[RMDB]
RNA sequence: GGGAACGACUCGAGUAGAGUCGAAAAAGCAUAGAUUUCUUUGCUAUGCUGAAGGGCCAGAAUGUCAAAUACAAGCUAUUCUAUGGCUCAUCAUGUCUGAAUGGCUGAGAUAGUCAAUGUGUGUCACGAAACUUACCCGUUUCGACGGGUAAGUUUCAAAAGAAACAACAACAACAAC
Reactivity to 2A3 in 0.01 (KOAc 150mM, MgCl2 10mM, bicine 150mM(pH8.5), 24C), signal-to-noise 1, nucleotides 027 to 126: a000g000c010a010u020a000g030a020u080u040u010c020u020u080u060g000c000u020a010u010g000c010u000g010a120a080g060g000g000c000c000a000g030a050a080u030g070u220c080a000a140a000u240a130c080a040a150g000c010u010a020u060u000c070u070a120u150g030g000c020u040c000a050u060c000a010u110g090u000c080u050g120a200a070u060g010g010c000u030g000a010g010a080u170a080g030u020c040a150a130u040g030u030g020u000g000u000c010a010c260
Reactivity to DMS in 0.01 (KOAc 150mM, MgCl2 10mM, bicine 150mM(pH8.5), 24C), signal-to-noise 2, nucleotides 027 to 126: a090g010c010a010u000a050g000a040u000u010u000c050u010u000u010g000c020u010a000u000g020c000u000g000a120a080g010g000g000c000c020a080g000a050a030u000g000u000c060a070a070a080u020a100c260a130a080g010c030u000a020u010u000c010u010a120u010g020g010c010u000c060a070u000c050a050u000g030u010c100u000g010a060a050u000g000g000c010u010g000a090g010a050u000a040g020u000c030a110a070u000g010u000g000u000g020u020c100a150c230
This 177-nucleotide RNA was probed chemically with 2A3 and DMS.
2A3 adducts were read by reverse transcription with SuperScript II with manganese.
DMS adducts were read by reverse transcription with MarathonRT.
High DMS reactivity at an A or C suggests that its Watson-Crick edge is free.